[RMDB]
RNA sequence: GGGAACGACUCGAGUAGAGUCGAAAAUACCGUCUUCUCCCCGACGGUUUCUAUCCAUAGCUUCACGUUGUGUAGCGUAGGUGGAAGGUAUCGUGUGGUGUAUAAACACCACAUAGUCUCUUAGGGGUCAAGCUGAUAAACUUCGGUUUAUCAGCAACUACUUUCAUAUGUUCGCAUAUGAAAGUAGAAAAGAAACAACAACAACAAC
Reactivity to DMS in 0.01 (KOAc 150mM, MgCl2 10mM, bicine 150mM(pH8.5), 24C), signal-to-noise 5, nucleotides 027 to 156: u010a070c010c010g010u000c010u000u010c030u000c010c000c020c070g000a070c060g010g020u000u000u000c020u000a060u000c010c000a100u000a190g030c010u000u000c020a030c040g020u000u000g020u000g020u000a020g030c030g040u000a040g010g030u010g020g010a050a070g010g010u000a060u000c070g030u010g020u000g000g040u000g030u000a150u000a170a130a140c000a010c010c000a000c000a000u010a030g010u000c060u000c040u000u000a270g030g020g020g010u000c020a060a160g020c000u000g010a010u000a010a010a020c010u000u000c300g040g010u000u000u000a000u000c000a010g020c000a000a030
Reactivity to 2A3 in 0.01 (KOAc 150mM, MgCl2 10mM, bicine 150mM(pH8.5), 24C), signal-to-noise 9, nucleotides 027 to 156: u070a000c000c000g010u010c020u200u050c050u110c000c000c000c010g000a000c010g000g010u000u030u020c040u040a160u030c010c010a060u050a160g000c010u050u060c010a030c060g300u300u280g010u100g020u050a020g010c020g080u090a070g010g090u020g010g020a020a020g060g040u120a060u200c060g000u000g000u000g000g030u010g050u020a090u110a290a250a020c000a000c000c000a000c000a000u000a000g010u000c010u000c010u110u190a040g000g010g010g010u040c060a070a030g000c000u000g000a000u000a000a000a000c010u030u080c190g060g000u000u000u000a000u000c000a000g000c000a000a000